[RMDB]
An RNA of 207 nucleotides, treated with 2A3 and read out base by base. The RNA was probed in 150 mM KOAc, 10 mM MgCl2 and 150 mM bicine (pH 8.5) at 24 C. Source: RMDB library ARCHII, as collected in RNAgym.
RNA sequence: GGGAACGACUCGAGUAGAGUCGAAAACUGACUUCGCUCUCGCUGCCUAAGCAGUAAGACAGUCCGUCAGCCCGGGAUUGCUAUCGUCCCGGUUCCUGGCGUCAUUAAGAUAGCCACUGCUGUUUACCUUCGUCAUUGGGGUGAACGGGACUCUUAGGUUAUCUGCACAGUUCGCUGUGCAGAUAACAAAAGAAACAACAACAACAAC
Reactivity to 2A3 in 0.01 (KOAc 150mM, MgCl2 10mM, bicine 150mM(pH8.5), 24C), signal-to-noise 3, nucleotides 027 to 156: c050u030g020a000c010u070u060c220g040c090u010c000u020c060g010c010u000g000c000c020u160a220a110g010c010a000g010u000a010a020g010a020c020a010g010u020c000c000g010u010c000a000g010c010c000c000g000g000g000a050u090u170g000c010u000a000u000c000g000u020c000c000c000g000g000u080u110c010c000u000g010g010c000g070u100c010a030u140u260a000a040g000a000u000a010g000c000c000a050c020u010g010c000u000g010u020u010u000a020c000c000u090u260c150g090u090c130a100u090u140g020g000g000g010u000g000a000a000c000g010g000g000a010c030u010c000u020u070a030g010